[RMDB]
RNA sequence: GGGAACGACUCGAGUAGAGUCGAAAAGCGGUUCAGGAAGAUGACAUAAAAGUUGAGAAACAGUUAUCAACCCUAAUGGAAGCUGAAAUGCAAGAUUGAUAAUGUAGUAGCAUAAUGAAACAUAUAACAAACCACGAGUGUUCGCACUCGUGGUUUGAAAAGAAACAACAACAACAAC
Reactivity to DMS in 0.01 (KOAc 150mM, MgCl2 10mM, bicine 150mM(pH8.5), 24C), signal-to-noise 1, nucleotides 027 to 126: g010c060g040g020u020u020c050a140g000g000a160a200g000a060u000g010a090c060a030u000a060a160a130a080g000u020u000g000a050g000a190a110a030c010a100g000u000u000a040u020c050a020a070c080c030c110u010a100a090u000g010g050a060a050g000c020u010g020a030a060a070u020g020c020a080a090g000a130u020u020g010a050u020a050a030u020g020u020a060g000u020a060g000c020a030u000a070a090u000g020a070a010a050c050a100u020a050u030a060a030